[RMDB]
RNA sequence: GGGAACGACUCGAGUAGAGUCGAAAAGAUAUGGAACGGAUUAGGGAGACCCUCGGAAACGAGAAGGUCGACGAUCUAGCACGUUCCUAAGUCAAAAGAUCUUCGCAAGUUCGCUUGCGAAGAUCAACCCCCCAUUAGUGUUCGCACUAAUGGGGGGAAAAGAAACAACAACAACAAC
Reactivity to DMS in 0.01 (KOAc 150mM, MgCl2 10mM, bicine 150mM(pH8.5), 24C), signal-to-noise 1, nucleotides 027 to 126: g000a000u010a300u010g000g000a000a010c000g000g000a030u010u000a030g000g030g000a080g020a030c030c020c000u000c000g070g000a140a080a240c000g000a010g010a190a060g040g050u000c000g000a100c300g030a020u000c030u000a020g000c300a030c030g030u000u010c000c000u000a030a070g000u000c100a100a080a040a150g000a000u000c010u010u010c000g020c020a020a010g000u010u030c190g020c000u000u030g000c000g000a000a000g000a000u000c030a040a080
Reactivity to 2A3 in 0.01 (KOAc 150mM, MgCl2 10mM, bicine 150mM(pH8.5), 24C), signal-to-noise 1, nucleotides 027 to 126: g000a000u060a080u210g000g000a020a000c010g000g000a030u040u030a010g060g000g030a000g000a000c000c000c000u010c010g000g050a040a060a060c040g020a020g060a300a140g120g000u020c000g240a040c000g030a000u000c020u000a000g040c060a020c050g000u010u000c000c000u030a140a040g060u000c030a000a040a060a210g000a000u000c000u000u000c000g010c000a010a010g020u080u100c240g130c230u000u030g010c020g000a000a000g000a000u000c000a000a020
Annotation: Chemical mapping of a 177-nucleotide RNA with DMS and 2A3. 2A3 adducts were read by reverse transcription with SuperScript II with manganese. In probing experiments dimethyl sulfate is read out at A N1 and C N3, which are open when not base-paired. For DMS, 730 sequencing reads were counted. The 2A3 profile rests on 2,086 reads. Values cover nucleotides 27 to 126. The RNA was probed in 150 mM KOAc, 10 mM MgCl2 and 150 mM bicine (pH 8.5) at 24 C.